RNA sequence: GGGAACGACUCGAGUAGAGUCGAAAAGUGCAGCACAGCAGGGACAACGAGGCGUUCAGGGACGCGCUGCUGAACAUCACCGAGCCCGAGGGUCGGUGGCUCCUGGACCUGAUUAACAUUUUGCAGAGCAUAGUGGUGCAGGAGCGCAGCCUGAGCCACAUCAAGACACCUUCGGGUGUCUUGAUGUAAAAGAAACAACAACAACAAC
Reactivity to 2A3 in 0.01 (KOAc 150mM, MgCl2 10mM, bicine 150mM(pH8.5), 24C), signal-to-noise 1, nucleotides 027 to 156: g050u050g050c000a010g000c020a010c000a010g000c030a030g020g000g120a030c070a000a120c210g000a030g100g000c150g000u140u110c050a020g120g080g040a010c000g030c000g000c010u060g120c000u020g020a030a030c020a070u090c010a000c010c020g000a050g090c050c000c010g050a190g010g030g040u000c000g010g010u020g040g000c000u110c000c040u030g040g060a060c010c000u060g000a090u080u090a130a080c080a140u060u120u000u240g100c080a090g070a030g190c000a090u060a060g050u070g080g000u020g000c000a000g080g010a020g020c010g000c000a000g030c020c080u030g010a010g010c000c000
This 207-nucleotide RNA was probed chemically with 2A3. The RNA was probed in 150 mM KOAc, 10 mM MgCl2 and 150 mM bicine (pH 8.5) at 24 C. Values cover nucleotides 27 to 156. It was measured as part of the RMDB library OK3TST.